[RMDB]
RNA sequence: GGGAACGACUCGAGUAGAGUCGAAAAAAGCUGCGGCGUCGCGGUGUCGUUGCACAUCUCGGAUGCUAUCUGUGCGGCUCUGGUAUGGCGUGCCGUACGCGUCGGCGGCUACACACCGACGGCGGUGCGACUUGAGACACUUCGGUGUCUCAAGUCGAAAAGAAACAACAACAACAAC
Reactivity to DMS in 0.01 (KOAc 150mM, MgCl2 10mM, bicine 150mM(pH8.5), 24C), signal-to-noise 2, nucleotides 027 to 126: a080a020g000c070u000g040c010g000g000c020g010u000c020g000c100g020g010u000g020u000c060g010u000u010g010c100a050c050a050u000c070u010c070g010g010a040u010g000c030u000a170u010c180u000g000u010g010c030g010g000c010u000c080u000g010g020u010a030u010g010g000c060g030u000g000c010c000g000u000a040c150g010c010g010u010c020g010g010c050g000g010c040u000a060c140a110c070a030c000c000g000a040c050g000g000c000g020g010u000g000
Reactivity to 2A3 in 0.01 (KOAc 150mM, MgCl2 10mM, bicine 150mM(pH8.5), 24C), signal-to-noise 2, nucleotides 027 to 126: a000a000g040c050u060g020c000g040g020c000g030u020c020g000c020g000g020u000g030u040c070g060u060u190g000c100a090c000a180u080c050u060c070g050g030a050u100g020c020u060a070u110c060u140g080u050g080c050g020g010c010u010c020u050g190g020u170a170u150g100g000c030g000u030g030c000c050g010u040a030c040g000c000g060u020c000g040g010c000g030g000c020u090a020c020a000c000a010c060c010g140a230c030g100g020c030g000g090u000g000
Chemical mapping of a 177-nucleotide RNA with DMS and 2A3. Reactivities are rounded to 0.1 and cut off at 0 and 3. 2A3 is a SHAPE reagent: it acylates the 2'-hydroxyl of flexible nucleotides of all four kinds. The RNA was probed in 150 mM KOAc, 10 mM MgCl2 and 150 mM bicine (pH 8.5) at 24 C.